[RMDB]
RNA sequence: GGGAACGACUCGAGUAGAGUCGAAAAGAAGUGCGAUUGAAUUCAAGCACAAGCUCGUUCUACGGGUCGGGUCCGACGUAGUUCGAGCGAUUAGUCUUGACGAGCCUGUGCUGGCGUCUUGACGAGAGGGAUGGUGCACGUUCGCGUGUACCAUCCCAAAAGAAACAACAACAACAAC
Reactivity to 2A3 in 0.01 (KOAc 150mM, MgCl2 10mM, bicine 150mM(pH8.5), 24C), signal-to-noise 5, nucleotides 027 to 126: g120a120a020g010u020g000c020g060a130u080u120g070a120a300u220u100c060a140a020g000c010a010c000a010a010g010c000u000c000g000u010u000c000u000a010c020g150g040g100u090c070g000g030g050u090c100c000g000a020c010g000u050a030g010u020u000c000g000a000g010c010g000a010u040u050a020g000u000c000u000u030g010a020c010g040a030g080c020c070u150g060u140g190c190u090g060g020c000g010u000c000u000u010g020a030c030g000a010g060a050
Reactivity to DMS in 0.01 (KOAc 150mM, MgCl2 10mM, bicine 150mM(pH8.5), 24C), signal-to-noise 2, nucleotides 027 to 126: g020a130a110g010u000g000c010g000a060u040u000g000a230a140u020u040c040a150a090g010c000a030c020a120a130g000c000u000c000g000u000u000c000u010a020c040g000g000g000u040c070g000g010g010u020c060c000g000a090c020g010u000a000g020u000u000c000g000a010g000c000g000a000u030u020a090g000u000c000u000u000g000a000c000g010a080g000c030c050u020g000u030g010c090u010g000g000c000g010u020c000u020u000g000a010c070g000a050g010a160